[RMDB]
RNA sequence: GGGAACGACUCGAGUAGAGUCGAAAAUUUAUUUUUUGGCUUAAGGUAAUGAUGCACCAGUGAAAUUCCUUGGAGAAAAACGUCAGUUACUACAGCCCUGACUUGCUUCAAUUGGCUUAGACUGGCCACUAUCAAGUACGUUCGCGUACUUGAUAGUAAAAGAAACAACAACAACAAC
Reactivity to 2A3 in 0.01 (KOAc 150mM, MgCl2 10mM, bicine 150mM(pH8.5), 24C), signal-to-noise 3, nucleotides 027 to 126: u020u030u010a060u020u100u040u000u040u090g030g020c000u060u010a130a080g020g020u020a090a080u090g080a040u060g010c040a020c030c020a050g020u030g150a100a110a120u100u030c020c010u010u040g070g030a100g060a030a130a050a010a000c020g020u020c030a040g040u050u080a030c020u010a010c030a020g010c020c010c000u020g050a020c020u020u150g060c010u040u050c020a070a230u110u110g000g020c000u000u000a030g040a140c060u020g050g000c000c020
Reactivity to DMS in 0.01 (KOAc 150mM, MgCl2 10mM, bicine 150mM(pH8.5), 24C), signal-to-noise 5, nucleotides 027 to 126: u000u010u010a030u000u000u000u000u000u000g010g010c020u000u000a080a110g000g000u000a060a050u000g000a070u010g010c090a090c060c030a070g010u000g010a050a110a130u000u000c030c020u000u020g000g010a120g000a050a050a060a100a100c220g010u010c010a020g000u010u000a060c060u000a100c250a050g010c040c060c250u000g000a040c060u000u000g000c110u000u000c030a040a110u000u010g010g000c020u000u010a060g010a100c090u010g010g000c020c120
Structure probing data (2A3 and DMS) for a 177-nucleotide construct. In probing experiments dimethyl sulfate is read out at A N1 and C N3, which are open when not base-paired. Values cover nucleotides 27 to 126.